The record gives the reactivity of an RNA of 177 nucleotides to DMS and 2A3. The reactions ran in a buffer of 150 mM KOAc, 10 mM MgCl2 and 150 mM bicine (pH 8.5), at 24 C. The data come from the RNA Mapping Database (RMDB), library OK2TRN. The DMS profile rests on 2,641 reads. 2A3 is a SHAPE reagent: it acylates the 2'-hydroxyl of flexible nucleotides of all four kinds. For DMS the reverse transcriptase was MarathonRT.
RNA sequence: GGGAACGACUCGAGUAGAGUCGAAAAAAAGACCCCGGGACCUUUACUACAGUUUGAUAUUGGUGUUCGGUUCGGCUUGUGUAGGAUAGCUGGGAGACUGUGAAGCCCGUACGCCAGUGUGGGUGGAGAAUGUAGCAAGAUUCGUCUUGCUACAUUCAAAAGAAACAACAACAACAAC
Reactivity to DMS in 0.01 (KOAc 150mM, MgCl2 10mM, bicine 150mM(pH8.5), 24C), signal-to-noise 3, nucleotides 027 to 126: a080a130a190g010a180c060c020c010c080g010g000g000a040c040c010u000u010u000a020c050u010a100c090a080g010u000u010u010g010a110u010a060u000u010g030g000u000g010u010u000c050g010g000u010u010c090g010g010c020u000u000g020u020g020u010a060g010g010a070u000a050g020c030u000g000g020g010a110g010a080c080u000g000u000g010a130a200g010c020c010c020g010u010a030c080g010c080c080a100g020u010g030u000g010g000g010u000g010g000a220
Reactivity to 2A3 in 0.01 (KOAc 150mM, MgCl2 10mM, bicine 150mM(pH8.5), 24C), signal-to-noise 1, nucleotides 027 to 126: a030a010a000g120a010c000c000c020c010g070g000g000a050c020c000u180u110u120a080c070u080a040c020a110g030u040u130u110g120a060u060a060u150u140g000g030u010g050u110u070c030g000g000u060u050c060g000g030c030u120u130g030u030g000u090a040g000g100a060u060a060g000c020u000g020g040g000a070g040a060c030u080g030u020g110a040a050g030c000c000c000g000u060a010c050g130c020c040a120g000u010g000u010g030g000g010u030g000g000a070